[RMDB]
RNA sequence: GGGAACGACUCGAGUAGAGUCGAAAAGAUAUGGACGUUAUGCACUAGCAACAGCUCGGAAACGAGACAUGCUAAACAUACUGCGUCCUAAGUCAAACUUUAGCUUUGGUUCGCCAAAGCUAAAGAAGCUUAGCUUACACUUCGGUGUAAGCUAAGCAAAAGAAACAACAACAACAAC
Reactivity to 2A3 in 0.01 (KOAc 150mM, MgCl2 10mM, bicine 150mM(pH8.5), 24C), signal-to-noise 2, nucleotides 027 to 126: g020a010u060a060u140g010g010a000c000g020u030u040a000u030g070c100a050c200u010a000g000c000a010a200c050a180g030c010u010c010g000g020a100a080a040c000g020a010g000a070c030a040u100g000c000u030a060a080a030c010a010u050a030c090u110g030c010g000u000c000c010u030a080a000g020u020c030a090a060a140c010u000u000u000a010g000c000u030u000u000g050g010u050u240c300g110c070c020a000a000a000g000c000u000a000a000a000g010a040a000
Reactivity to DMS in 0.01 (KOAc 150mM, MgCl2 10mM, bicine 150mM(pH8.5), 24C), signal-to-noise 2, nucleotides 027 to 126: g000a030u010a300u020g010g000a000c020g040u000u010a020u000g010c070a120c260u000a000g000c000a020a070c300a230g010c000u000c010g000g000a030a080a210c000g030a030g000a050c100a200u000g000c020u000a030a060a210c000a020u010a000c300u000g020c000g000u000c000c000u010a030a140g020u020c050a090a100a110c000u000u000u000a030g010c000u000u000u000g000g030u000u030c270g020c020c010a000a000a000g010c010u000a000a000a000g010a060a120